RNA sequence: GGGAACGACUCGAGUAGAGUCGAAAACUAAACAGUUGGAAUGAUGUGGUACUAAUGUGUUUUGCUAGUUACAGUUAGACAGGGAAGAAUGGAGAGAAAAAACUGAUGAAUAACCAGGCAGGUACAGCAAAUAAAAUGUAUUCUCAUUAGGUUGCAAUGAGCAGUGAUAGUUCGCUAUCACUGCUCAAAAAGAAACAACAACAACAAC
Reactivity to 2A3 in 0.01 (KOAc 150mM, MgCl2 10mM, bicine 150mM(pH8.5), 24C), signal-to-noise 1, nucleotides 027 to 156: c010u060a090a000a090c030a070g040u070u060g060g060a070a070u080g050a100u100g070u060g040g000u010a070c000u040a100a090u080g060u030g100u000u000u040u150g000c000u040a030g020u130u070a060c010a020g000u030u000a020g050a030c040a020g060g000g000a030a020g000a000a020u060g020g010a030g000a000g000a010a160a000a000a000a000c020u020g000a010u010g020a080a040u040a060a040c050c000a010g030g000c030a020g000g010u080a100c020a000g030c040a100a070a000u140a050a100a050a010u080g020u090a210u090u060c050u000c000a060u080u160a050g030g020u010u040g000c020a040a080